[RMDB]
RNA sequence: GGGAACGACUCGAGUAGAGUCGAAAAGAUAUGGAAGGACUGCGGACAUCGAUCUCGGAAACGAGGGAGUCCCAGUUCCUUCCUAAGUCAAAACCUCUCUGAUCACCUUCGGGUGAUCAGAGAGGAAGACCUAUGAGAAGUUCGCUUCUCAUAGGUCAAAAGAAACAACAACAACAAC
Reactivity to 2A3 in 0.01 (KOAc 150mM, MgCl2 10mM, bicine 150mM(pH8.5), 24C), signal-to-noise 2, nucleotides 027 to 126: g030a000u050a040u190g010g010a000a010g010g010a000c030u030g060c260g080g000a010c050a240u300c120g110a160u060c020u010c000g010g030a060a060a030c020g000a010g010g020g000a020g030u020c010c000c000a000g010u020u000c000c000u000u010c000c000u000a010a000g000u010c030a000a030a120a190c000c000u000c000u030c010u010g020a000u010c010a000c030c020u030u090c300g100g020g000u000g000a000u000c000a010g010a010g000a000g000g000a000a010
Reactivity to DMS in 0.01 (KOAc 150mM, MgCl2 10mM, bicine 150mM(pH8.5), 24C), signal-to-noise 2, nucleotides 027 to 126: g010a050u000a300u030g000g010a000a010g000g000a060c010u000g000c260g040g000a030c010a260u010c120g020a090u010c000u000c000g000g000a090a090a150c000g010a020g000g000g000a060g010u000c000c000c000a010g000u000u010c000c000u000u000c000c000u000a010a090g020u000c040a100a070a100a100c000c000u000c010u000c000u000g020a000u000c000a010c000c000u030u030c300g030g020g010u000g000a000u000c000a000g000a020g010a010g010g020a000a060

An RNA of 177 nucleotides, treated with 2A3 and DMS and read out base by base.
The reactions ran in a buffer of 150 mM KOAc, 10 mM MgCl2 and 150 mM bicine (pH 8.5), at 24 C.
Reactivities are rounded to 0.1 and cut off at 0 and 3.
It was measured as part of the RMDB library TTRDEL.
For 2A3, 3,661 sequencing reads were counted.
For DMS, 1,534 sequencing reads were counted.